The record gives the reactivity of an RNA of 177 nucleotides to 2A3 and DMS. The RNA was probed in 150 mM KOAc, 10 mM MgCl2 and 150 mM bicine (pH 8.5) at 24 C. Values cover nucleotides 27 to 126. DMS adducts were read by reverse transcription with MarathonRT. The 2A3 profile rests on 894 reads.

[RMDB]
RNA sequence: GGGAACGACUCGAGUAGAGUCGAAAAGGUUUAGCCAUGUCUUUUAGCUUUUCUUGCCAUACGUGGAGACAAUCAUUCGGCAAGAAUGCUGGCAACUAGGUUGUGCUAUUGCACUUUUUGUUGCAUCCGUAAAACGGCAUUUCGAUGCCGUUUUACGAAAAGAAACAACAACAACAAC
Reactivity to 2A3 in 0.01 (KOAc 150mM, MgCl2 10mM, bicine 150mM(pH8.5), 24C), signal-to-noise 1, nucleotides 027 to 126: g150g010u050u130u190a000g020c000c020a050u050g020u010c040u030u080u040u060a050g000c040u100u160u050u120c000u030u000g020c020c000a100u090a220c150g040u020g000g040a090g100a110c050a060a090u090c010a050u160u120c100g000g010c000a000a000g000a000a000u010g020c010u010g020g000c010a000a010c020u070a020g210g000u160u080g030u020g080c020u240a300u300u270g000c000a010c000u030u070u010u120u070g040u040u020g010c020a040u100c000
Reactivity to DMS in 0.01 (KOAc 150mM, MgCl2 10mM, bicine 150mM(pH8.5), 24C), signal-to-noise 2, nucleotides 027 to 126: g000g020u000u010u000a110g000c040c050a080u020g010u000c020u000u000u000u000a040g010c010u010u010u010u010c000u000u000g000c010c010a120u000a090c250g030u000g020g000a170g000a110c220a100a130u010c070a050u010u000c180g000g000c010a010a010g000a010a030u000g010c020u000g000g010c010a010a020c000u000a030g010g040u010u000g020u010g000c030u000a130u000u000g030c010a040c010u000u000u010u000u010g020u000u000g010c020a110u000c100